RNA sequence: GGGAACGACUCGAGUAGAGUCGAAAAACUGACGGUACGCCGUCAGAACGGUAGAAAAGAUGGUUUGAAAACCACGCCUUCUACCAAUAUAGUAAAUAAAUAGGCGGAGCGUUCAUACGUGACCGCAAAAACAUAUUCAGCUUCGGCUGAAUAUGAACAUUAGAGUCUUGUUCGCAAGACUCUAAUGAAAAGAAACAACAACAACAAC
Reactivity to 2A3 in 0.01 (KOAc 150mM, MgCl2 10mM, bicine 150mM(pH8.5), 24C), signal-to-noise 4, nucleotides 027 to 156: a000c000u000g000a000c000g020g000u050a040c210g030c040c000g000u000c000a000g000a050a020c090g000g000u000a010g040a050a010a030a020g090a260u040g010g100u020u140u260g190a170a190a010a000c000c000a000c010g040c000c030u000u030c000u010a000c000c000a000a000u120a020u050a000g100u050a000a080a130u120a100a080a060u160a050g090g000c000g010g000a010g000c010g000u140u220c190a090u230a300c010g030u050g120a300c020c000g000c020a070a070a010a000a000c000a000u000a000u000u000c000a000g020c020u040u080c100g070g000c000u000g000a000a000u000a000u000g020a020a000
Reactivity to DMS in 0.01 (KOAc 150mM, MgCl2 10mM, bicine 150mM(pH8.5), 24C), signal-to-noise 2, nucleotides 027 to 156: a220c010u010g000a050c000g000g000u000a160c210g110c040c000g010u000c010a020g000a050a070c090g010g030u000a010g000a010a030a010a000g000a040u030g000g010u000u010u020g020a300a090a170a070c000c000a000c000g000c010c030u010u000c020u000a010c000c000a120a030u030a180u030a110g000u000a100a050a180u000a080a060a160u020a090g020g010c010g000g100a300g030c040g010u000u010c100a060u000a060c000g020u000g010a300c010c000g000c030a000a040a050a130a090c000a030u000a000u000u000c030a040g020c020u000u010c300g040g050c020u030g010a000a030u000a010u010g010a090a270

Structure probing data (2A3 and DMS) for a 207-nucleotide construct. The data come from the RNA Mapping Database (RMDB), library M2RFPK. The RNA was probed in 150 mM KOAc, 10 mM MgCl2 and 150 mM bicine (pH 8.5) at 24 C.